Structure probing data (2A3 and DMS) for a 177-nucleotide construct. The RNA was probed in 150 mM KOAc, 10 mM MgCl2 and 150 mM bicine (pH 8.5) at 24 C. The data come from the RNA Mapping Database (RMDB), library TTRDEL. Reactivities are given for positions 27 through 126. 2A3 adducts were read by reverse transcription with SuperScript II with manganese.
RNA sequence: GGGAACGACUCGAGUAGAGUCGAAAAGAUAUGGAGUAUGGCCGAUAAGCUGUGUGGUCGGAAACGACCACCAGCUUUUGACGGCAUACUCCUAAGUCGGGGUGCUGAGGCUUCGGCCUCAGCACAACCCUUUACUUUCCUUCGGGAAAGUAAAGGGAAAAGAAACAACAACAACAAC
Reactivity to 2A3 in 0.01 (KOAc 150mM, MgCl2 10mM, bicine 150mM(pH8.5), 24C), signal-to-noise 1, nucleotides 027 to 126: g030a020u050a050u100g000g000a000g020u020a010u040g230g200c000c000g040a070u070a280a070g030c020u010g120u110g020u020g300g000u010c010g000g040a090a030a000c000g020a000c000c030a000c000c000a010g020c000u000u000u010u010g030a000c000g010g000c020a000u000a000c000u000c000c000u010a070a000g070u020c010g020g000g060g080u010g020c050u040g010a010g000g020c030u130u210c300g080g000c010c000u000c040a020g000c000a000c000a010a020
Reactivity to DMS in 0.01 (KOAc 150mM, MgCl2 10mM, bicine 150mM(pH8.5), 24C), signal-to-noise 1, nucleotides 027 to 126: g010a020u000a300u010g000g000a020g000u000a000u000g010g020c000c000g000a220u010a020a020g020c010u000g020u010g010u000g000g020u020c000g000g000a080a060a150c000g000a020c000c010a010c010c000a000g000c010u000u020u000u010g010a180c160g000g000c000a010u010a000c000u000c000c000u000a010a070g010u000c010g000g000g020g040u000g030c000u010g010a010g000g020c030u000u010c230g020g000c010c000u030c010a000g000c010a000c000a030a070